Record summary:
This 177-nucleotide RNA was probed chemically with 2A3 and DMS. Reactivities are rounded to 0.1 and cut off at 0 and 3. For 2A3 the reverse transcriptase was SuperScript II with manganese. The reactions ran in a buffer of 150 mM KOAc, 10 mM MgCl2 and 150 mM bicine (pH 8.5), at 24 C.

RNA sequence: GGGAACGACUCGAGUAGAGUCGAAAAGAUAUGGAACGGCAUGACAUGGCUGCCUCGGAAACGAGAGGCCAACAGCAUGCGUUCCUAAGUCAAAACUUCAUGAGCAGCUUCGGCUGCUCAUGAAGAACUAUGCUUAGUUGUUCGCAACUAAGCAUAGAAAAGAAACAACAACAACAAC
Reactivity to 2A3 in 0.01 (KOAc 150mM, MgCl2 10mM, bicine 150mM(pH8.5), 24C), signal-to-noise 6, nucleotides 027 to 126: g000a010u050a020u080g000g000a010a010c050g300g030c040a000u010g060a300c060a170u120g020g000c020u050g110c110c000u010c000g000g010a040a030a020c010g000a000g000a010g010g020c010c010a100a040c050a050g030c000a000u010g000c000g000u000u000c000c000u000a040a000g030u010c030a010a020a130a210c000u000u000c000a000u010g000a000g000c000a000g000c010u110u220c300g130g000c000u010g000c000u000c000a000u000g000a000a000g000a000a000
Reactivity to DMS in 0.01 (KOAc 150mM, MgCl2 10mM, bicine 150mM(pH8.5), 24C), signal-to-noise 8, nucleotides 027 to 126: g010a030u000a290u000g000g010a010a000c010g040g020c000a000u000g000a060c060a250u000g010g000c000u000g010c280c000u000c000g010g010a060a070a110c010g000a010g020a300g000g000c000c000a000a070c250a070g000c000a000u000g010c010g000u000u000c000c000u000a010a080g000u000c030a040a080a060a190c000u000u000c000a000u000g000a020g000c000a000g010c000u000u020c250g020g000c000u000g000c000u010c000a000u000g000a000a000g010a030a170